[RMDB]
RNA sequence: GGGAACGACUCGAGUAGAGUCGAAAAUUUGUUACUGUCAACCUUGCAAAAGUUUGCACUUAUGCCAUCUUUGCUUACUCACCACAGCUUACACUUGUGUUUCCGGAAGUGAAGAUGAUACUUUUAUUGAGACUACACUUCGGUGUAGUCAAAAGAAACAACAACAACAAC
Reactivity to 2A3 in 0.01 (KOAc 150mM, MgCl2 10mM, bicine 150mM(pH8.5), 24C), signal-to-noise 9, nucleotides 027 to 129: u120u080u130g080u030u080a070c060u040g080u080c030a060a030c030c030u030u090g070c040a020a020a060a100g030u050u100u100g060c060a030c090u200u180a080u230g030c000c010a000u000c010u000u000u000g000c000u020u030a170c020u030c080a030c020c000a010c000a000g020c030u170u210a070c060a020c090u080u060g010u010g030u050u080u040c040c040g040g020a020a000g000u000g020a010a000g010a000u020g010a010u060a070c020u040u090u070u080a170u080u180g040a090
Reactivity to DMS in 0.01 (KOAc 150mM, MgCl2 10mM, bicine 150mM(pH8.5), 24C), signal-to-noise 5, nucleotides 027 to 129: u020u000u000g040u010u010a120c100u040g000u030c000a060a060c090c040u030u000g030c060a080a060a070a040g000u000u000u000g000c060a120c120u060u050a090u000g030c000c000a010u010c040u030u000u000g020c030u000u000a060c000u070c060a040c300c000a040c010a000g030c070u040u080a090c170a110c230u010u010g000u020g000u000u030u030c170c180g000g030a010a010g000u020g000a000a000g040a050u000g000a070u040a080c080u040u020u000u040a080u050u040g020a280

Source: RMDB library 15KLIB, as collected in RNAgym. This 170-nucleotide RNA was probed chemically with 2A3 and DMS. For DMS the reverse transcriptase was MarathonRT. The 2A3 profile rests on 20,128 reads.